RNA sequence: GGGAACGACUCGAGUAGAGUCGAAAAUGCUUGGCAAAUGUGAGUCUGCGAUCCAGAAGCACUCCAAGCUACUUUGCUGCGUUCGGCUGUGGUACUGGGGCUUCCUCGAUGUAGACGGGCGGUGGCAUGGCAUGCCACGAUUCGUCGUGGCAUGCCAAAAAGAAACAACAACAACAAC
Reactivity to DMS in 0.01 (KOAc 150mM, MgCl2 10mM, bicine 150mM(pH8.5), 24C), signal-to-noise 2, nucleotides 027 to 126: u010g000c010u000u000g000g030c300a020a070a110u010g040u010g020a090g030u000c000u000g020c150g000a050u030c080c030a010g030a040a020g030c000a020c050u000c010c010a020a080g020c010u000a060c070u000u000u010g020c010u000g090c170g020u020u000c020g010g020c000u000g000u000g000g000u010a050c070u000g010g010g020g010c110u030u000c020c050u000c050g030a100u000g000u010a050g000a060c030g000g010g010c030g000g010u010g000g000c050a130
Reactivity to 2A3 in 0.01 (KOAc 150mM, MgCl2 10mM, bicine 150mM(pH8.5), 24C), signal-to-noise 1, nucleotides 027 to 126: u070g000c000u010u050g020g090c060a020a030a240u200g010u000g020a030g000u020c010u020g030c120g080a080u010c000c030a030g010a030a010g040c000a000c020u010c000c000a000a030g000c000u020a050c010u090u170u120g000c010u030g040c000g100u060u080c050g000g030c040u040g050u090g050g060u110a050c060u100g000g020g020g070c090u090u100c020c000u010c030g060a090u170g030u100a030g020a020c000g000g020g020c000g000g030u080g000g000c100a080
This 177-nucleotide RNA was probed chemically with DMS and 2A3. For 2A3 the reverse transcriptase was SuperScript II with manganese. For 2A3, 1,174 sequencing reads were counted. For DMS the reverse transcriptase was MarathonRT. The data come from the RNA Mapping Database (RMDB), library OK2TST.